This 177-nucleotide RNA was probed chemically with DMS. Values cover nucleotides 27 to 126. The RNA was probed in 150 mM KOAc, 10 mM MgCl2 and 150 mM bicine (pH 8.5) at 24 C. Source: RMDB library TTRINS, as collected in RNAgym.
RNA sequence: GGGAACGACUCGAGUAGAGUCGAAAAGAUAUGGAAGCUCGUUUUACUUAUCCCUGCAAGGCUAUGUGGUCGGAAACGACCACUAAGGCUGAUGACCAGGGAGUAAGUAAAACGAGCUUCCUAAGUCGUUGUAGUUCUAGUUCGCUAGAACUACAACAAAAGAAACAACAACAACAAC
Reactivity to DMS in 0.01 (KOAc 150mM, MgCl2 10mM, bicine 150mM(pH8.5), 24C), signal-to-noise 4, nucleotides 027 to 126: g020a100u010a300u010g010g010a020a000g040c000u000c000g020u000u000u000u000a000c010u000u000a050u010c010c000c000u000g000c010a080a110g010g040c010u000a300u030g020u010g000g010u000c000g020g000a110a130a300c010g010a010c000c000a010c000u000a070a130g000g000c000u000g000a060u000g010a170c300c000a000g000g020g010a030g000u000a010a020g000u000a000a000a000a020c020g000a010g000c000u000u000c000c000u010a020a070g010u000c100